An RNA of 177 nucleotides, treated with 2A3 and DMS and read out base by base.
The 2A3 profile rests on 2,739 reads.
For 2A3 the reverse transcriptase was SuperScript II with manganese.
[RMDB]
RNA sequence: GGGAACGACUCGAGUAGAGUCGAAAAGAUAUGGACGACCAACUAGCAACAGCUAAGUUCGGAAACGAACUUAGACAUGCUAUGUUGUGUCGUCCUAAGUCAAACACGACAUGUUCGCAUGUCGUGAUCAUGGCGACAGGUUCGCCUGUCGCCAUGAAAAAGAAACAACAACAACAAC
Reactivity to 2A3 in 0.01 (KOAc 150mM, MgCl2 10mM, bicine 150mM(pH8.5), 24C), signal-to-noise 2, nucleotides 027 to 126: g050a030u090a070u090g000g000a010c010g030a010c010c000a000a000c020u040a000g020c010a010a190c040a230g150c010u000a000a000g000u000u010c000g040g040a030a050a040c020g000a000a010c000u010u000a000g120a060c020a030u080g030c010u040a100u300g000u030u000g030u090g000u020c000g010u000c000c000u050a000a000g010u020c020a050a010a000c010a010c030g030a000c000a000u020g070u120u150c300g030c160a000u020g000u000c000g010u010g000a010
Reactivity to DMS in 0.01 (KOAc 150mM, MgCl2 10mM, bicine 150mM(pH8.5), 24C), signal-to-noise 2, nucleotides 027 to 126: g000a060u000a300u010g000g000a000c010g000a030c000c010a000a030c010u000a020g000c000a050a050c300a200g000c000u000a000a000g060u000u000c000g040g000a090a080a290c000g000a000a000c000u000u000a000g000a060c060a180u000g000c020u020a000u030g010u000u000g020u040g010u000c020g020u010c000c000u000a000a040g010u000c050a240a130a270c010a000c000g020a010c010a000u000g000u000u000c240g010c010a010u000g010u000c000g030u000g000a040